[RMDB]
An RNA of 177 nucleotides, treated with 2A3 and DMS and read out base by base. The DMS profile rests on 8,523 reads.
RNA sequence: GGGAACGACUCGAGUAGAGUCGAAAACAUGUACCCUUCGGGGUACAUGAACAUAACGCGGGCGUGGGACACCGCCGGAGCUAGCCUCAGAUUGUCCCAGUAUUAGGUGCGCCUUCGGGCGCACCAAGUGAUUAACGAUAUUCGUAUCGUUAAUCACAAAAGAAACAACAACAACAAC
Reactivity to 2A3 in 0.01 (KOAc 150mM, MgCl2 10mM, bicine 150mM(pH8.5), 24C), signal-to-noise 7, nucleotides 027 to 126: c000a000u000g010u000a000c000c000c010u020u040c230g040g000g000g000u010a000c000a000u000g000a000a000c030a070u210a130a050c100g000c020g030g010g010c120g120u050g000g000g010a000c010a000c010c000g000c000c040g080g000a010g020c050u100a040g030c020c010u030c010a040g020a200u110u190g020u000c000c000c010a000g020u050a170u150u240a050g000g010u000g000c030g030c000c010u040u110c300g080g010g000c000g010c010a000c000c000a000a000
Reactivity to DMS in 0.01 (KOAc 150mM, MgCl2 10mM, bicine 150mM(pH8.5), 24C), signal-to-noise 5, nucleotides 027 to 126: c010a010u000g010u000a000c000c000c000u000u010c190g030g000g010g010u000a000c000a000u000g000a080a090c120a110u000a090a140c220g020c030g010g000g000c100g000u000g020g010g010a020c010a060c030c020g010c020c120g000g010a040g010c050u010a090g000c090c010u000c060a080g000a130u000u000g000u000c020c000c000a090g010u010a080u000u010a090g010g030u000g010c000g000c000c000u010u000c140g020g000g010c000g000c000a000c000c000a000a020